Source information: This 207-nucleotide RNA was probed chemically with DMS and 2A3. The reactions ran in a buffer of 150 mM KOAc, 10 mM MgCl2 and 150 mM bicine (pH 8.5), at 24 C. For 2A3 the reverse transcriptase was SuperScript II with manganese. The DMS profile rests on 2,286 reads.
[RMDB]
RNA sequence: GGGAACGACUCGAGUAGAGUCGAAAAAGGGAUGGAUCGAGCUUGAGCUGCGAGCCGAGAGGCGAUCUCGUAAACACGCACUUAAAUAUAACUGGCAAAACUAACAGUUUUAACCAAAACGUAGCAUUAGCUGCCUAAUAAGCGCAGCGAGCUCUUCGCUCAUAUAACACUUCGGUGUUAUAUGAGCAAAAGAAACAACAACAACAAC
Reactivity to DMS in 0.01 (KOAc 150mM, MgCl2 10mM, bicine 150mM(pH8.5), 24C), signal-to-noise 1, nucleotides 027 to 156: a100g030g000g010a080u000g000g000a040u000c120g010a080g020c050u000u010g010a170g050c000u000g000c010g020a180g100c090c020g010a290g000a110g010g000c030g030a130u000c000u020c010g000u000a160a100a100c030a100c070g050c030a060c040u000u000a050a060a130u000a090u010a040a100c070u010g030g010c030a070a030a050a080c030u000a050a090c040a060g020u000u000u010u000a040a190c090c050a020a070a080a040c070g040u000a030g020c040a070u000u000a110g040c020u000g000c000c030u000a060a110u020a020a060g020c010g000c000a150g010c000g000a040g020c060u000c000u010u010c110
Reactivity to 2A3 in 0.01 (KOAc 150mM, MgCl2 10mM, bicine 150mM(pH8.5), 24C), signal-to-noise 4, nucleotides 027 to 156: a000g110g000g010a050u070g030g010a040u060c060g040a010g010c010u040u060g050a020g030c020u010g020c030g040a010g050c050c000g020a020g000a000g000g000c010g090a170u020c000u010c030g190u150a020a030a010c030a000c020g040c000a050c080u110u190a030a170a020u200a060u060a070a040c050u000g030g040c050a040a040a050a130c060u060a020a040c030a030g020u010u020u030u080a040a070c060c030a020a050a000a060c060g060u070a010g010c010a050u050u040a020g010c010u000g020c020c000u140a220a160u150a220a020g000c060g000c040a000g000c000g010a020g000c000u000c010u070u070c090